Annotation: Chemical mapping of a 207-nucleotide RNA with 2A3 and DMS. For 2A3 the reverse transcriptase was SuperScript II with manganese. The reactions ran in a buffer of 150 mM KOAc, 10 mM MgCl2 and 150 mM bicine (pH 8.5), at 24 C.
RNA sequence: GGGAACGACUCGAGUAGAGUCGAAAAGAUAGCCGCUGCCGACGGCAACGCCAAGGGCUAUUGCCUUCUCCUCGGCUUUGCCGGUGACGUCUUGGAAGACGGCGAUGGAAGAGUUAAUGCCACGGCCCUCGCGGAAGAGUGAACGGACAGUGCGGCCUCUUCCGUCUUAUUUCGAUAAGACGGAAGAAAAAGAAACAACAACAACAAC
Reactivity to 2A3 in 0.01 (KOAc 150mM, MgCl2 10mM, bicine 150mM(pH8.5), 24C), signal-to-noise 3, nucleotides 027 to 156: g050a060u200a010g010c010c010g000c010u010g040c010c000g020a040c000g000g030c020a010a010c010g010c010c020a040a060g000g000g000c050u080a180u110u300g040c020c030u070u040c080u080c020c040u110c050g010g020c000u040u070u060g000c000c000g000g010u030g050a050c030g010u000c020u030u110g090g090a060a030g020a030c010g010g000c020g020a070u120g010g070a090a090g120a040g080u110u250a090a030u130g050c050c060a040c050g040g000c010c000c000u040c030g000c030g080g050a100a010g070a010g080u150g090a130a020c000g020g060a040c010a060g060u040g070c030g010g000c000c040
Reactivity to DMS in 0.01 (KOAc 150mM, MgCl2 10mM, bicine 150mM(pH8.5), 24C), signal-to-noise 1, nucleotides 027 to 156: g020a120u010a080g020c000c020g000c020u020g040c060c020g020a030c000g020g010c020a040a050c060g000c000c000a120a020g030g010g000c050u010a060u000u010g050c100c070u000u000c030u000c050c090u010c070g000g020c020u000u000u010g020c000c000g010g030u000g000a030c040g000u000c020u020u000g000g020a140a150g020a050c010g000g010c000g010a160u000g020g000a090a050g000a120g020u030u000a070a050u020g000c090c010a100c000g010g010c010c000c040u000c050g000c030g050g020a110a120g040a160g020u000g020a050a210c000g000g020a000c100a090g000u010g050c040g010g000c030c090